[RMDB]
RNA sequence: GGGAACGACUCGAGUAGAGUCGAAAAGCAAACGCAUCGUCGUGGCCAAGAGAUCGAACAAAUAGUGACAAAAGCAACCGUUCUAACACGACCUUGUCGCCGCGGGCGGAAACUUCUUCCAGGGAGCACUCCCUGACUGGUUCGCCAGUCAGGGAGUAAAAGAAACAACAACAACAAC
Reactivity to 2A3 in 0.01 (KOAc 150mM, MgCl2 10mM, bicine 150mM(pH8.5), 24C), signal-to-noise 3, nucleotides 027 to 126: g090c050a230a050a010c050g000c030a040u150c040g140u000c000g000u030g000g030c030c000a050a000g020a000g040a250u100c050g050a070a100c000a040a100a080u170a080g070u080g120a050c110a040a130a040a030g070c030a100a010c090c060g070u050u030c030u070a060a050c010a030c080g050a030c000c000u010u010g090u120c030g000c020c010g010c000g010g050g020c000g000g000a060a020a000c010u030u030c000u100u000c010c000a050g080g000g050a040g050c030
Reactivity to DMS in 0.01 (KOAc 150mM, MgCl2 10mM, bicine 150mM(pH8.5), 24C), signal-to-noise 2, nucleotides 027 to 126: g000c160a110a120a180c040g020c040a010u080c060g080u000c000g050u000g010g030c060c110a120a120g000a020g000a130u040c110g030a040a010c200a040a130a080u010a020g010u010g000a010c090a060a110a100a160g000c130a100a100c270c130g000u000u040c010u000a130a120c220a080c070g000a020c080c040u000u000g000u050c080g020c050c060g000c030g000g000g000c030g030g000a110a090a060c050u050u010c080u020u030c060c000a090g000g000g000a110g000c180
Structure probing data (2A3 and DMS) for a 177-nucleotide construct. The DMS profile rests on 1,756 reads. The RNA was probed in 150 mM KOAc, 10 mM MgCl2 and 150 mM bicine (pH 8.5) at 24 C.